Conditions: 150 mM KOAc, 10 mM MgCl2 and 150 mM bicine (pH 8.5), 24 C.
The record gives the reactivity of an RNA of 207 nucleotides to DMS and 2A3.
For DMS the reverse transcriptase was MarathonRT.
For 2A3 the reverse transcriptase was SuperScript II with manganese.
The DMS profile rests on 3,568 reads.
It was measured as part of the RMDB library M2RFOK.
Reactivities are given for positions 27 through 156.
RNA sequence: GGGAACGACUCGAGUAGAGUCGAAAAACAUGCUGGCCCACCCAACCCCACGAUCCUCCAUCGGCAUGAUCAUGAUGUGUUCUCAAAUAUCAGGCCAGUAAAUCACCAUGCUCGUGCUGGUAAAGGCAACUUAUGCCCAAGUUCGCUUGGGCAUAAACGAUUCACAAAGUUUCGACUUUGUGAAUCGAAAAGAAACAACAACAACAAC
Reactivity to DMS in 0.01 (KOAc 150mM, MgCl2 10mM, bicine 150mM(pH8.5), 24C), signal-to-noise 2, nucleotides 027 to 156: a050c060a050u000g020c020u000g020g010c040c000c030a100c050c030c050a140a170c090c020c020c040a180c200g000a140u010c010c000u000c050c050a050u000c000g000g000c000a030u000g010a070u000c040a050u000g020a050u000g030u010g020u000u010c010u000c010a140a070a130u010a130u010c090a070g010g050c020c000a030g020u000a020a040a120u000c000a020c010c000a050u010g030c120u000c000g000u000g010c000u020g010g020u000a030a040a060g020g030c090a080a130c080u010u000a020u000g000c000c010c020a000a040g020u000u010c300g050c040u000u010g030g000g060c000a010u000a000a010a150
Reactivity to 2A3 in 0.01 (KOAc 150mM, MgCl2 10mM, bicine 150mM(pH8.5), 24C), signal-to-noise 3, nucleotides 027 to 156: a000c030a010u050g000c000u000g010g060c000c000c000a090c000c040c040a050a060c010c010c020c040a040c060g050a140u090c020c010u040c060c020a020u010c000g020g000c010a000u010g000a010u010c000a000u000g060a070u080g020u000g020u080u010c050u010c040a070a070a030u260a130u120c040a020g000g040c020c000a000g010u020a010a100a050u100c010a010c020c000a000u010g000c000u010c020g010u000g000c020u010g000g000u040a160a120a020g030g000c010a050a050c050u010u020a010u010g000c000c000c000a020a000g000u030u090c060g030c120u000u030g030g000g000c010a000u000a000a000a000